[RMDB]
RNA sequence: GGGAACGACUCGAGUAGAGUCGAAAAGUGCCGGCAAUACAGUGUGUAUGGAGGUCUCAAUGGCUCGGAAGUGCCAGCAAACCGGCGUACAUAUUAGCAGACGUAUGGGCGUAAGACUUUUAUUGAAAAAAGUACAUAAGCUUCGGCUUAUGUACAAGUCAUUGUGUCUCUUCGGAGACACAAUGACAAAAGAAACAACAACAACAAC
Reactivity to DMS in 0.01 (KOAc 150mM, MgCl2 10mM, bicine 150mM(pH8.5), 24C), signal-to-noise 1, nucleotides 027 to 156: g020u000g050c020c000g000g030c030a080a050u020a090c110a120g060u000g050u000g000u000a020u000g030g030a200g000g000u000c020u000c080a100a110u000g000g040c030u000c050g040g050a160a250g010u000g030c000c000a030g020c060a060a100a030c010c000g010g000c040g000u000a010c010a020u040a070u000u010a080g000c080a080g010a060c180g050u000a060u000g070g010g030c050g010u000a010a120g000a090c030u000u000u000u000a170u000u010g000a000a050a080a190a110a130g020u000a000c000a000u000a000a010g010c020u000u000c300g060g010c000u000u000a030u000g040u000a000c000a010a060
Reactivity to 2A3 in 0.01 (KOAc 150mM, MgCl2 10mM, bicine 150mM(pH8.5), 24C), signal-to-noise 2, nucleotides 027 to 156: g070u060g040c020c000g070g020c040a030a020u070a050c050a050g070u020g010u080g040u170a070u020g070g020a030g010g000u010c040u030c100a110a120u060g000g000c060u050c070g030g090a130a000g050u030g000c010c000a030g030c040a040a000a040c010c020g020g000c020g020u030a000c000a030u080a050u070u070a040g010c060a010g020a090c010g050u040a020u050g030g080g020c050g010u060a030a040g110a030c000u000u030u110u270a160u190u170g020a050a080a000a000a030a030g000u010a000c000a010u000a000a000g000c000u050u060c210g100g000c000u000u010a000u000g020u000a020c000a000a000